RNA sequence: GGGAACGACUCGAGUAGAGUCGAAAAGAUAUGGAUGGCUACUUCUUGGACCUGGACUCCGCAUACGUAACAUCCAUCGGAAACGAUGGUGGUAUGCGGAGUCCAGCUAGAAGGUCCAUCCUAAGUCCCGUUGUAUAUUGUUCGCAAUAUACAACGGAAAAGAAACAACAACAACAAC
Reactivity to DMS in 0.01 (KOAc 150mM, MgCl2 10mM, bicine 150mM(pH8.5), 24C), signal-to-noise 4, nucleotides 027 to 126: g010a120u000a290u010g000g020a010u000g010g000c110u000a300c000u010u000c000u010u010g030g000a130c300c020u000g000g000a030c000u000c000c000g000c000a010u000a000c000g010u000a030a040c250a030u010c000c000a000u010c000g000g000a150a120a290c000g020a030u000g000g020u010g010g020u000a010u000g010c000g010g000a000g000u000c000c000a000g010c040u000a010g000a020a010g000g000u000c000c000a010u000c000c000u010a050a120g000u000c050
Reactivity to 2A3 in 0.01 (KOAc 150mM, MgCl2 10mM, bicine 150mM(pH8.5), 24C), signal-to-noise 1, nucleotides 027 to 126: g060a050u120a080u260g010g010a010u010g000g030c080u270a240c000u300u000c030u090u180g130g180a230c000c000u020g000g050a020c000u000c010c000g000c020a000u000a030c060g030u020a060a030c060a300u140c030c000a020u020c020g000g090a110a050a020c050g000a010u000g000g020u010g010g010u020a000u000g000c010g050g000a000g040u000c000c000a010g000c020u010a010g010a000a010g070g030u010c000c000a000u000c000c000u000a080a030g060u090c030